Record summary:
An RNA of 170 nucleotides, treated with DMS and 2A3 and read out base by base. The RNA was probed in 150 mM KOAc, 10 mM MgCl2 and 150 mM bicine (pH 8.5) at 24 C. It was measured as part of the RMDB library 15KLIB. DMS adducts were read by reverse transcription with MarathonRT. Values are in units of 0.01, from 0 to 300, in steps of 10.
[RMDB]
RNA sequence: GGGAACGACUCGAGUAGAGUCGAAAAUUAGACAAAUUGUCUGAUUACUGUACGUUUGUUUGUUGGGCUCAUGGCUUUGAAUUAACGUCUGCAUCAUACUUUUGCAAGAUAGGUAAGGAACAGAAGUGUACAUUGGGGUUCGCCCCAAUGAAAAGAAACAACAACAACAAC
Reactivity to DMS in 0.01 (KOAc 150mM, MgCl2 10mM, bicine 150mM(pH8.5), 24C), signal-to-noise 5, nucleotides 027 to 129: u030u020a040g000a000c010a100a190a120u020u010g030u010c000u020g000a030u000u000a150c080u030g020u000a130c130g000u040u030u020g040u000u030u020g000u000u000g010g000g010c060u020c090a090u070g030g000c050u040u050u020g000a070a080u000u000a020a020c100g020u010c030u000g000c090a070u000c100a050u040a080c110u010u010u010u020g060c080a100a110g000a100u000a070g000g000u010a020a030g030g020a050a180c070a070g020a050a050g030u030g030u030a130
Reactivity to 2A3 in 0.01 (KOAc 150mM, MgCl2 10mM, bicine 150mM(pH8.5), 24C), signal-to-noise 3, nucleotides 027 to 129: u010u020a000g000a020c000a110a300a150u120u210g020u000c000u000g040a000u020u040a020c030u080g040u220a010c030g100u100u070u010g140u060u030u050g120u010u010g000g000g000c010u060c130a090u040g020g000c000u060u060u160g160a170a120u100u060a000a000c040g010u000c050u060g010c050a030u000c000a000u030a180c090u030u080u120u040g070c000a040a020g040a100u090a030g060g000u090a000a000g060g000a050a050c020a010g050a080a000g000u060g000u240a000